RNA sequence: GGGAACGACUCGAGUAGAGUCGAAAAGGUCGUCUUUUCGAAGACGACCACUGUCGUUCCCAAAACUUUUCGAAACAUGUCGAAAGACAUGCUGAAACUGAAUUGGUGUGUGUUUCGACACACACAAAGAGAUAAGAGACUUCGGUCUCUUAUCUCUAAAAGAAACAACAACAACAAC
Reactivity to 2A3 in 0.01 (KOAc 150mM, MgCl2 10mM, bicine 150mM(pH8.5), 24C), signal-to-noise 1, nucleotides 027 to 126: g030g000u000c010g010u020c000u030u020u020u070c200g070a000a000g000a010c000g000a000c000c010a000c000u000g000u000c000g000u010u000c000c000c020a020a010a010a010c010u030u010u070u040c020g060a130a000a050c020a010u000g010u010c000g050a070a000a020g000a000c010a000u000g010c010u070g040a030a010a020c110u080g030a170a070u090u100g160g000u010g020u000g000u000g000u000u070u090c100g040a010c010a000c010a000c040a000c000a010a070
Reactivity to DMS in 0.01 (KOAc 150mM, MgCl2 10mM, bicine 150mM(pH8.5), 24C), signal-to-noise 2, nucleotides 027 to 126: g000g030u000c000g020u000c000u000u000u010u020c170g010a000a020g010a020c010g010a010c000c010a010c070u010g030u000c010g000u000u000c000c000c000a050a040a080a150c120u000u000u000u000c040g040a170a080a140c010a010u000g000u000c000g010a130a080a160g000a000c000a000u000g010c040u000g000a090a070a110c220u000g000a050a110u000u000g000g010u000g010u000g000u010g010u000u000u020c150g010a040c010a010c000a010c000a000c010a030a060

The record gives the reactivity of an RNA of 177 nucleotides to 2A3 and DMS. For DMS the reverse transcriptase was MarathonRT. Source: RMDB library M2PK50, as collected in RNAgym. Conditions: 150 mM KOAc, 10 mM MgCl2 and 150 mM bicine (pH 8.5), 24 C.